[RMDB]
RNA sequence: GGGAACGACUCGAGUAGAGUCGAAAAUGCUGGACUCGCCGCCCAAGUUCGAGCAUGGGCCAAUUCCGAGCGAAGAGUCCGCGGGGGAAGGAUCAGUGCCCGAGAGGGGUAAAGUGGUAAAGAGUAUUGGAACGCCGAGGAGAUGUCUCCCAAGAAGCCGUAUAAUGGGGUUCGCCCCAUUAUACGGAAAAGAAACAACAACAACAAC
Reactivity to 2A3 in 0.01 (KOAc 150mM, MgCl2 10mM, bicine 150mM(pH8.5), 24C), signal-to-noise 1, nucleotides 027 to 156: u130g000c080u160g010g010a000c020u010c020g050c060c020g060c010c000c020a080a090g060u060u100c150g100a040g030c020a090u100g000g010g030c010c030a070a100u230u110c040c050g050a040g050c060g060a090a040g030a040g020u000c000c000g000c000g010g010g020g000g000a020a020g030g000a050u050c020a050g050u050g090c000c070c020g000a080g000a040g070g080g000g000u050a040a070a090g090u050g000g020u040a050a080a070g030a000g010u060a060u120u120g000g000a110a040c060g070c160c060g030a050g000g020a080g000a000u050g010u020c010u010c080c000c000a030a000g040a090a000g140
The data come from the RNA Mapping Database (RMDB), library VIROID. This 207-nucleotide RNA was probed chemically with 2A3. Values are in units of 0.01, from 0 to 300, in steps of 10.